[RMDB]
RNA sequence: GGGAACGACUCGAGUAGAGUCGAAAAGAAAGAAAGAAAGUCUCACCCCCGCCUGACACGGGCGACAGCUGCGGCCCGCUGUGUUCACUCGGGCCGAGUGCGUCUCCUGUCAGGCAAGGGAGAGCAAUCAGCCCCAUCAAUUCGUUGAUGGGGCUGAAAAAGAAACAACAACAACAAC
Reactivity to DMS in 0.01 (KOAc 150mM, MgCl2 10mM, bicine 150mM(pH8.5), 24C), signal-to-noise 1, nucleotides 027 to 126: g030a120a150a020g020a120a070a110g000a030a060a040g040u030c000u020c000a090c090c060c000c020c240g060c000c050u000g000a000c010a020c240g000g000g000c180g030a020c030a270g050c020u000g000c000g010g000c010c000c000g070c240u000g040u000g000u100u000c210a030c000u000c030g000g000g010c000c000g000a000g080u010g000c070g010u000c000u000c010c000u000g030u030c000a030g000g100c000a040a000g000g020g000a080g000a050g000c040a140a100
Reactivity to 2A3 in 0.01 (KOAc 150mM, MgCl2 10mM, bicine 150mM(pH8.5), 24C), signal-to-noise 2, nucleotides 027 to 126: g090a010a000a000g140a030a080a010g120a060a110a010g070u000c000u000c010a180c000c010c010c030c040g000c000c000u000g000a010c010a040c150g020g000g000c060g050a010c020a040g030c000u290g210c010g000g000c010c010c000g000c100u010g050u030g070u270u250c180a080c070u000c000g000g000g000c000c000g010a000g010u040g000c070g000u010c010u000c020c000u000g000u000c000a000g010g000c000a000a000g000g000g000a050g000a000g000c000a000a080